An RNA of 177 nucleotides, treated with DMS and 2A3 and read out base by base. Conditions: 150 mM KOAc, 10 mM MgCl2 and 150 mM bicine (pH 8.5), 24 C. The data come from the RNA Mapping Database (RMDB), library OK1LIB. The 2A3 profile rests on 1,843 reads.

RNA sequence: GGGAACGACUCGAGUAGAGUCGAAAAAAAAGCCUAGCAGGUCGGAGAGGCAGACCGCGCCGUUUGCGUGGGCGGCGUUCACGAAAGCAAAACCCGACGUCGCGAGCAGCCCCGUUAGGCGCCAGAACCUGGAUCUCUAUUUCGAUAGAGAUCCAGGAAAAGAAACAACAACAACAAC
Reactivity to DMS in 0.01 (KOAc 150mM, MgCl2 10mM, bicine 150mM(pH8.5), 24C), signal-to-noise 2, nucleotides 027 to 126: a110a010a030a180g000c000c000u000a000g020c020a120g020g000u040c000g000g010a130g000a070g000g000c010a080g000a120c060c130g020c020g000c010c100g000u000u060u000g000c070g010u060g000g020g020c010g000g010c100g010u040u030c060a100c070g030a050a060a170g000c160a060a080a090a090c090c000c020g000a040c000g000u020c050g020c020g000a040g080c030a250g000c000c000c020c040g000u000u020a070g000g000c000g010c020c060a160g030a050a100
Reactivity to 2A3 in 0.01 (KOAc 150mM, MgCl2 10mM, bicine 150mM(pH8.5), 24C), signal-to-noise 3, nucleotides 027 to 126: a000a000a000a000g070c040c000u020a070g030c180a130g080g050u100c070g030g120a140g000a070g100g020c030a000g060a070c020c000g000c000g000c020c020g100u050u080u180g070c090g010u150g020g030g010c000g030g010c010g000u040u030c100a040c120g100a140a070a040g060c060a110a050a040a110c000c010c000g010a010c040g020u070c040g000c020g010a040g060c040a020g010c000c000c000c000g000u020u030a010g020g020c010g010c020c010a040g030a100a030